[RMDB]
RNA sequence: GGGAACGACUCGAGUAGAGUCGAAAACUGUAAAACUACUACUGGUAUACCUGAAUACAACUUUAUCAUCUACGACUCAUCAGAUCGUGGCCAGGAAAGUUUAGCUAGGUCUGCAUGUGUUUAUUAUAAGGGAGCUUGUUCGCAAGCUCCAAAAGAAACAACAACAACAAC
Reactivity to 2A3 in 0.01 (KOAc 150mM, MgCl2 10mM, bicine 150mM(pH8.5), 24C), signal-to-noise 4, nucleotides 027 to 129: c010u030g010u100a010a080a090a040c050u120a030c000u020a000c050u110g000g000u090a000u020a040c010c020u040g030a060a010u160a060c060a050a010c000u050u050u030a140u170c080a060u030c020u030a020c020g000a000c000u000c010a040u010c020a040g030a010u000c010g200u110g020g000c030c050a080g050g040a070a120a010g070u110u040u030a000g000c040u020a000g010g010u010c000u000g020c060a020u000g010u010g010u000u010u040a120u000u100a170u030a100a020g090
Reactivity to DMS in 0.01 (KOAc 150mM, MgCl2 10mM, bicine 150mM(pH8.5), 24C), signal-to-noise 2, nucleotides 027 to 129: c060u000g050u060a060a100a090a090c140u070a140c120u070a030c000u020g000g020u030a060u020a020c090c000u000g050a060a030u030a070c190a000a000c130u020u020u020a110u060c110a080u000c090u060a100c110g050a010c060u020c040a060u070c150a070g010a070u040c020g070u070g020g030c070c060a000g090g010a090a000a150g060u060u000u040a010g010c070u010a130g000g000u010c050u020g040c060a030u030g000u010g000u000u070u000a120u130u000a110u000a000a000g070